This 177-nucleotide RNA was probed chemically with DMS and 2A3. The data come from the RNA Mapping Database (RMDB), library M2PK90. The reactions ran in a buffer of 150 mM KOAc, 10 mM MgCl2 and 150 mM bicine (pH 8.5), at 24 C. The 2A3 profile rests on 1,057 reads. For DMS the reverse transcriptase was MarathonRT.
RNA sequence: GGGAACGACUCGAGUAGAGUCGAAAAGUUAUGGAAAACGUCUUAGCUACCACUACAACAACAAUGCUGGACGGUGAUGGUUCGACUUACUCGAAACCAUCACGAAGUGGUAGUCGUUCCCAUUCAAAUCCAUAUUGCCCUUCGGGGCAAUAUGGAUAAAAGAAACAACAACAACAAC
Reactivity to DMS in 0.01 (KOAc 150mM, MgCl2 10mM, bicine 150mM(pH8.5), 24C), signal-to-noise 1, nucleotides 027 to 126: g010u000u020a060u010g090g010a030a030a100a140c080g000u000c010u000u000a030g020c030u000a050c030c030a040c060u010a130c160a060a030c050a060a110c150a050a080u000g000c010u000g000g000a030c090g020g010u000g020a000u000g000g020u000u000c000g000a030c180u000u020a180c210u000c010g020a040a070a050c010c000a000u010c010a080c120g000a080a090g010u020g000g010u000a160g010u000c000g010u000u000c000c000c000a060u000u000c180a050a050
Reactivity to 2A3 in 0.01 (KOAc 150mM, MgCl2 10mM, bicine 150mM(pH8.5), 24C), signal-to-noise 1, nucleotides 027 to 126: g070u060u120a080u170g120g050a080a120a000a090c040g030u000c000u100u160a020g000c010u050a020c000c060a060c120u220a060c100a140a000c000a020a000c020a110a160u130g010c020u050g040g020a030c030g000g000u010g040a010u030g000g060u000u010c010g060a040c030u080u090a010c050u040c010g000a060a050a040c000c000a020u060c000a000c090g020a050a030g000u000g000g010u000a020g000u000c000g000u020u000c000c000c050a000u000u050c010a000a010